Chemical mapping of a 177-nucleotide RNA with 2A3. Values cover nucleotides 27 to 126.
RNA sequence: GGGAACGACUCGAGUAGAGUCGAAAAUCAAGCGCCGACGCCGUAGGGGAGGUCAGAGCGAUGCAUCGCCACUGACGCCGGCGGCCAGGCCCUGGACGGCGCUGCGUCGGUGCGACCCGCGGCCGUGCGCAUCCAGGGCGUUCGCGCCCUGGAUGCGAAAAGAAACAACAACAACAAC
Reactivity to 2A3 in 0.01 (KOAc 150mM, MgCl2 10mM, bicine 150mM(pH8.5), 24C), signal-to-noise 1, nucleotides 027 to 126: u050c050a090a000g020c000g000c040c040g030a010c030g000c010c010g100u150a300g000g010g000g040a030g190g100u020c080a000g010a000g000c020g020a020u130g140c060a300u140c000g000c000c070a300c070u000g000a000c010g000c000c020g020g000c000g020g000c010c000a070g060g110c050c000c010u020g170g050a070c090g000g110c120g000c060u020g000c000g000u050c000g020g000u010g070c040g040a050c000c020c020g050c070g000g000c000c070g050u110g000